[RMDB]
RNA sequence: GGGAACGACUCGAGUAGAGUCGAAAACGAUAUCUUCGGAUAUCGAAAAAAGCGUACUACCAGGAGGCGUAGGGAGCUAUGGUUCCCAAAUAGGAACUGUAGCGAGGAUCUACGCUACCCACCCUGGUAUCGCAAAAAACUGUGCUUCGGCACAGAAACAAAAAUGGAAAUUCGUUUCCAUUUUUGUAAAAGAAACAACAACAACAAC
Reactivity to DMS in 0.01 (KOAc 150mM, MgCl2 10mM, bicine 150mM(pH8.5), 24C), signal-to-noise 2, nucleotides 027 to 156: c020g000a010u000a000u000c000u010u000c280g080g000a010u000a010u000c010g020a020a040a060a070a110a110g010c020g000u000a130c170u000a010c000c010a040g020g010a300g020g000c000g020u000a040g000g020g010a140g060c000u000a010u020g020g020u000u000c000c000c010a040a090a150u000a030g000g010a020a040c000u010g020u000a000g000c010g000a050g030g000a100u000c010u000a000c000g000c000u000a000c030c030c020a300c120c010c000u000g030g010u000a010u000c010g000c020a000a080a100a050a110a090c000u000g010u000g010c000u000u010c300g050g010c000a000c000a010g000a060a120
Reactivity to 2A3 in 0.01 (KOAc 150mM, MgCl2 10mM, bicine 150mM(pH8.5), 24C), signal-to-noise 2, nucleotides 027 to 156: c000g030a000u000a000u000c010u040u060c230g070g000a000u000a000u000c000g070a110a000a000a000a000a000g050c050g010u100a050c030u000a000c050c000a000g010g010a020g040g000c000g000u000a000g010g010g010a010g010c000u000a000u000g020g000u000u020c030c010c020a130a190a040u140a040g000g000a000a010c000u020g000u010a000g000c000g040a120g000g020a000u000c000u000a000c000g000c000u010a010c010c000c010a060c010c000c000u010g000g000u010a000u040c020g000c000a060a090a000a000a020a050c010u010g000u000g000c000u030u060c220g090g000c000a000c000a010g020a010a030